[RMDB]
RNA sequence: GGGAACGACUCGAGUAGAGUCGAAAAUUAAAGCCAUUCGUGGCUUUAAACUCUGGUGUCCCGAUAAGGCUCGUGCGCGAUCCCACGCGAACCAGUUUUCGAUUAAGGAUAAGUUCGCUUAUCCUAAUACUCAGUUUUUAUUCGUAAAAACUGAGUAAAAAGAAACAACAACAACAAC
Reactivity to DMS in 0.01 (KOAc 150mM, MgCl2 10mM, bicine 150mM(pH8.5), 24C), signal-to-noise 6, nucleotides 027 to 126: u000u000a000a000a010g010c000c000a040u000u020c180g020u000g020g010c000u000u000u000a000a030a130c130u000c050u010g010g010u000g000u000c030c010c010g010a100u010a100a120g010g010c030u000c070g010u000g020c030g020c020g000a120u010c020c010c010a190c090g000c010g010a070a050c030c050a080g010u010u000u000u000c080g010a140u010u000a110a040g000g000a020u000a010a010g010u000u010c230g030c000u000u000a010u000c000c000u000a050a090
Reactivity to 2A3 in 0.01 (KOAc 150mM, MgCl2 10mM, bicine 150mM(pH8.5), 24C), signal-to-noise 3, nucleotides 027 to 126: u030u000a000a000a000g010c010c000a010u030u040c180g080u040g000g020c000u010u000u000a010a020a010c040u030c020u060g100g000u050g080u130c030c010c020g060a110u080a200a050g100g000c030u020c060g020u080g040c050g000c000g030a050u020c020c010c000a010c000g050c020g020a030a040c020c000a040g040u020u020u070u100c100g020a070u140u080a090a030g000g000a000u000a010a000g010u020u070c130g010c080u010u010a010u000c000c000u000a000a000
The record gives the reactivity of an RNA of 177 nucleotides to DMS and 2A3. For 2A3 the reverse transcriptase was SuperScript II with manganese. The RNA was probed in 150 mM KOAc, 10 mM MgCl2 and 150 mM bicine (pH 8.5) at 24 C. The DMS profile rests on 7,779 reads. Reactivities are given for positions 27 through 126.